This 207-nucleotide RNA was probed chemically with 2A3. The reactions ran in a buffer of 150 mM KOAc, 10 mM MgCl2 and 150 mM bicine (pH 8.5), at 24 C.
RNA sequence: GGGAACGACUCGAGUAGAGUCGAAAAGACAGUUAAAGGCAUUUCCUGUGAAAUAAUACUGGUAUGUAUUUAACCAUGCAGAUCCUCAGUUUGUGGUCUGCCAGCUAAAGGUGAAGAUAUAUUCCUCCAAUUCAGGACCCACACGACGGGAAGACAAGGUGCGAGGGACUUUCGAGUCCCUCGCACCAAAAGAAACAACAACAACAAC
Reactivity to 2A3 in 0.01 (KOAc 150mM, MgCl2 10mM, bicine 150mM(pH8.5), 24C), signal-to-noise 1, nucleotides 027 to 156: g030a000c020a040g000u050u050a050a030a020g090g040c020a060u070u160u100c000c000u010g030u050g070a110a110a180u280a110a080u100a090c030u010g020g000u010a010u020g010u000a020u020u150u040a010a000c010c020a030u080g000c000a010g000a060u050c000c010u030c050a080g070u040u200u140g090u080g000g010u000c000u050g070c040c010a080g040c050u240a090a050a040g100g000u030g040a080a000g020a030u000a000u010a040u090u050c000c000u000c020c020a000a010u060u170c010a000g000g000a040c000c000c000a030c010a010c010g080a000c030g030g000g080a030a010g040a030c090a020a000